RNA sequence: GGGAACGACUCGAGUAGAGUCGAAAAGUAUACUGUGCAAGCCCCCCCUCCUGCCAAGACACAGGAGAAAGCCGUAGGCAGGUCCGCUGACCUCCAAAAGGGUAAUGUUGCUCCCCUUAAGAAGCAAGAAACCUAAUAGGUUCGCCUAUUAGGUUUCAAAAGAAACAACAACAACAAC
Reactivity to DMS in 0.01 (KOAc 150mM, MgCl2 10mM, bicine 150mM(pH8.5), 24C), signal-to-noise 2, nucleotides 027 to 126: g000u020a130u000a080c070u000g000u000g010c010a160a170g020c020c010c020c020c020c060c000u000c010c010u000g000c020c070a080a080g020a150c160a120c030a020g010g000a090g000a050a120a160g020c170c050g040u010a070g000g030c090a050g000g000u010c010c050g000c110u000g000a040c020c030u020c020c060a120a070a100a000g010g010g000u000a070a100u000g030u000u000g000c020u000c020c000c000c020u000u000a020a040g000a110a060g050c030a040a090
Conditions: 150 mM KOAc, 10 mM MgCl2 and 150 mM bicine (pH 8.5), 24 C. Chemical mapping of a 177-nucleotide RNA with DMS. For DMS the reverse transcriptase was MarathonRT. Reactivities are given for positions 27 through 126.